[RMDB]
Chemical mapping of a 177-nucleotide RNA with DMS and 2A3. Conditions: 150 mM KOAc, 10 mM MgCl2 and 150 mM bicine (pH 8.5), 24 C. DMS (dimethyl sulfate) methylates the pairing face of unpaired adenines and cytosines.

RNA sequence: GGGAACGACUCGAGUAGAGUCGAAAAGAUAUGGACCGUACCCUUUUGACGCUCAGGAGAUCGGAAACGAUCUUAUUGGAGCGAUAAGGACGGUCCUAAGUCAAACCCGCGUGUUCGCACGCGGGAACUAUCUAUUUGGGUUCGCCCAAAUAGAUAGAAAAGAAACAACAACAACAAC
Reactivity to DMS in 0.01 (KOAc 150mM, MgCl2 10mM, bicine 150mM(pH8.5), 24C), signal-to-noise 6, nucleotides 027 to 126: g000a030u000a300u000g000g010a010c000c000g010u000a160c200c000c000u000u000u000u000g010a150c070g020c000u000c010a090g000g000a010g010a010u000c000g010g010a060a050a170c010g000a010u000c000u000u000a050u020u010g010g010a010g010c000g010a070u000a030a050g000g000a060c000g000g000u000c000c000u000a020a080g000u000c030a080a100a170c000c000c000g010c000g020u000g020u000u010c170g020c000a000c000g020c010g010g000g000a010a030
Reactivity to 2A3 in 0.01 (KOAc 150mM, MgCl2 10mM, bicine 150mM(pH8.5), 24C), signal-to-noise 7, nucleotides 027 to 126: g010a020u060a030u130g000g000a010c000c010g070u280a300c050c010c030u090u070u070u250g300a150c080g000c000u010c010a030g130g000a010g010a010u010c000g000g030a040a040a030c020g000a020u020c030u000u020a230u110u230g260g010a000g000c010g000a020u040a020a000g000g000a000c000g010g000u000c000c000u000a020a000g030u000c030a060a050a160c000c000c010g000c000g000u030g020u030u120c300g000c180a000c000g010c020g000g000g000a000a010